[RMDB]
RNA sequence: GGGAACGACUCGAGUAGAGUCGAAAACAGGACGCUUUUGGCAUGAUCAGGGUUAAUAAGAUCAAGGCCAUCCAGAUUUCUGACCUUAGUCCAGCUUGUCUUAGCCCUUCAUCAGAGAGCACCCUAUCUAUACUCUGAGCUGACAGCAAAAUUGCCAGAAUUGGACUUUAUUCGUAAAGUCCAAUUCAAAAGAAACAACAACAACAAC
Reactivity to DMS in 0.01 (KOAc 150mM, MgCl2 10mM, bicine 150mM(pH8.5), 24C), signal-to-noise 2, nucleotides 027 to 156: c040a140g030g000a040c040g000c050u000u000u020u010g020g030c100a140u010g010a050u000c070a060g040g020g020u000u000a050a090u000a090a100g000a040u000c010a040a080g000g020c010c010a040u000c050c070a240g020a180u000u010u000c070u000g000a040c010c000u000u000a070g020u000c030c020a100g020c090u000u020g000u000c060u000u000a080g030c010c010c010u000u000c020a100u010c080a250g000a130g000a070g020c030a060c000c040c020u000a100u020c050u000a110u000a050c010u000c010u020g000a060g020c020u010g000a080c030a040g030c060a070a030a090a170u000u000g020c010c040a230
Reactivity to 2A3 in 0.01 (KOAc 150mM, MgCl2 10mM, bicine 150mM(pH8.5), 24C), signal-to-noise 6, nucleotides 027 to 156: c050a040g040g050a040c040g030c020u060u090u070u060g030g000c030a020u030g010a040u070c050a040g080g000g040u090u120a140a050u090a240a090g010a010u070c050a080a130g030g000c030c030a020u020c020c020a050g030a170u080u180u060c050u070g140a160c010c010u060u110a030g030u020c040c020a010g010c040u050u090g020u020c010u020u090a030g010c000c020c000u030u060c040a070u020c020a000g020a010g010a010g080c020a070c010c010c010u040a050u070c060u050a090u060a140c030u000c020u030g010a020g020c030u040g040a050c030a020g040c010a000a060a080a230u120u160g050c010c130a010
Background: Chemical mapping of a 207-nucleotide RNA with DMS and 2A3. It was measured as part of the RMDB library OK3TST. 2A3 adducts were read by reverse transcription with SuperScript II with manganese. For 2A3, 4,594 sequencing reads were counted.